[RMDB]
RNA sequence: GGGAACGACUCGAGUAGAGUCGAAAAUCAACAAAAUCGAUAUUGCCGUACAACAGCUUCCUUUCAUUAUUACGUAAUGACUGUUGUGAUUUAAAACCUGCCAACACAUCACCAGUCAGGGAAUAUAAUAAUCCACGUACUUCGGUACGUGGAUUAUAAAAGAAACAACAACAACAAC
Reactivity to 2A3 in 0.01 (KOAc 150mM, MgCl2 10mM, bicine 150mM(pH8.5), 24C), signal-to-noise 3, nucleotides 027 to 126: u050c020a010a100c040a100a140a030a030u150c090g010a030u040a120u150u140g070c100c030g090u080a030c010a050a000c000a020g000c010u150u080c000c000u090u100u020c040a000u000u230a020u100u210a070c120g030u030a020a000u070g030a000c000u000g040u100u040g000u020g040a050u020u090u150a020a110a050a050c000c000u010g010c040c000a060a000c080a030c000a110u090c000a000c100c000a000g000u010c000a010g000g010g010a030a010u240a000u000a160
Reactivity to DMS in 0.01 (KOAc 150mM, MgCl2 10mM, bicine 150mM(pH8.5), 24C), signal-to-noise 3, nucleotides 027 to 126: u030c070a090a030c130a090a060a040a060u010c100g020a030u040a060u070u010g020c000c030g020u030a080c190a030a070c020a050g010c130u000u010c000c030u010u010u040c040a010u000u000a010u020u020a030c160g010u040a070a080u020g030a020c100u010g000u020u000g000u000g020a060u000u020u070a060a110a040a090c080c010u000g010c080c050a090a030c250a090c230a050u020c030a020c070c010a040g010u040c010a000g010g020g010a040a030u000a040u020a080
An RNA of 177 nucleotides, treated with 2A3 and DMS and read out base by base. The reactions ran in a buffer of 150 mM KOAc, 10 mM MgCl2 and 150 mM bicine (pH 8.5), at 24 C. For DMS, 2,929 sequencing reads were counted. Values cover nucleotides 27 to 126.